Structure probing data (DMS) for a 177-nucleotide construct.
RNA sequence: GGGAACGACUCGAGUAGAGUCGAAAAGUACGUCUUGAUGCUGGAGAUGGUUUCCAAGGUGCUGAGAUAUCACCUUAUUAUGAUUCAUUACUCGUAAAAUUAUCUACACAUGCGAUAUCAUUUAAACAGAAUUUAAACCUUUCGAGGUUUAAAUUCUAAAAGAAACAACAACAACAAC
Reactivity to DMS in 0.01 (KOAc 150mM, MgCl2 10mM, bicine 150mM(pH8.5), 24C), signal-to-noise 1, nucleotides 027 to 126: g010u030a080c040g020u000c010u000u000g010a110u010g040c060u000g010g000a070g040a030u000g000g030u000u000u000c000c010a140a030g010g010u010g020c100u010g030a140g010a100u000a030u000c010a030c050c040u010u000a020u010u000a040u010g010a050u000u000c080a070u010u000a090c250u000c040g030u000a040a070a090a030u030u000a030u000c010u020a110c110a090c070a110u000g000c070g000a050u000a030u020c030a080u020u010u000a040a070a100c130